RNA sequence: GGGAACGACUCGAGUAGAGUCGAAAACUGUGACACACUGUGUCACUGAGUGUCUCACAGUCACUGACACACAGACACUCACUGUGUCUGAGUGAGAGUCAGACUCAGACAGUGUGACAGAGACUCAGCCACUCACCGUUUUCGAACGGUGAGUGGCAAAAGAAACAACAACAACAAC
Reactivity to 2A3 in 0.01 (KOAc 150mM, MgCl2 10mM, bicine 150mM(pH8.5), 24C), signal-to-noise 2, nucleotides 027 to 126: c000u000g020u000g060a040c020a000c000a020c070u190g000u010g020u100c040a010c070u010g020a010g030u050g040u020c010u000c010a080c060a050g040u050c010a030c250u170g040a030c000a000c010a010c000a000g010a060c000a030c040u070c040a130c060u120g000u000g000u000c000u000g040a040g020u040g110a150g020a040g070u060c040a010g060a080c000u030c090a000g010a070c000a010g020u010g040u010g090a010c030a020g090a010g050a030c000u010c030a020
Reactivity to DMS in 0.01 (KOAc 150mM, MgCl2 10mM, bicine 150mM(pH8.5), 24C), signal-to-noise 2, nucleotides 027 to 126: c040u020g020u000g070a080c040a050c050a110c130u030g040u010g020u000c150a090c090u000g010a050g000u010g020u010c040u000c080a040c220a180g020u000c020a120c100u000g000a100c010a090c100a150c070a050g010a060c030a010c010u000c180a090c110u000g000u000g000u010c000u010g020a060g060u000g000a130g010a130g010u000c050a080g000a050c030u000c010a040g010a020c010a070g000u000g020u000g010a060c060a070g000a090g010a110c040u000c040a080